The record gives the reactivity of an RNA of 177 nucleotides to DMS and 2A3. The RNA was probed in 150 mM KOAc, 10 mM MgCl2 and 150 mM bicine (pH 8.5) at 24 C.
RNA sequence: GGGAACGACUCGAGUAGAGUCGAAAAGACAAAUGCAGCAUAUUAGGCUAAGCAGGAAAGGGACGGUAGCUCCUGGUGUCAGUUCAUUCGGUGUGAUGCAUCUGCGUCGUGCACACAUGCACCCAAACUCGUAAGGGAAAUUCGUUUCCCUUACGAGAAAAGAAACAACAACAACAAC
Reactivity to DMS in 0.01 (KOAc 150mM, MgCl2 10mM, bicine 150mM(pH8.5), 24C), signal-to-noise 6, nucleotides 027 to 126: g010a080c100a030a070a070u010g000c040a060g010c030a070u010a090u010u000a090g020g000c040u000a070a110g020c030a050g020g000a050a070a070g000g010g000a060c100g010g000u010a050g020c050u000c020c010u000g010g000u000g010u000c040a050g010u000u000c070a060u010u010c090g000g020u010g030u000g010a110u000g000c030a050u000c070u000g010c100g020u000c130g020u000g010c030a030c060a030c080a050u010g000c090a100c020c010c050a050a110a210
Reactivity to 2A3 in 0.01 (KOAc 150mM, MgCl2 10mM, bicine 150mM(pH8.5), 24C), signal-to-noise 4, nucleotides 027 to 126: g050a020c030a010a090a020u080g000c010a010g000c010a020u060a100u260u180a150g100g020c010u050a050a030g020c010a020g070g070a090a070a050g040g030g030a010c030g020g050u070a030g030c030u030c010c020u030g050g000u040g000u070c060a050g040u050u070c040a040u100u100c080g040g000u030g020u040g050a150u030g000c000a020u030c030u140g060c030g050u130c030g010u040g000c000a000c010a010c010a050u060g040c010a080c000c010c020a020a060a090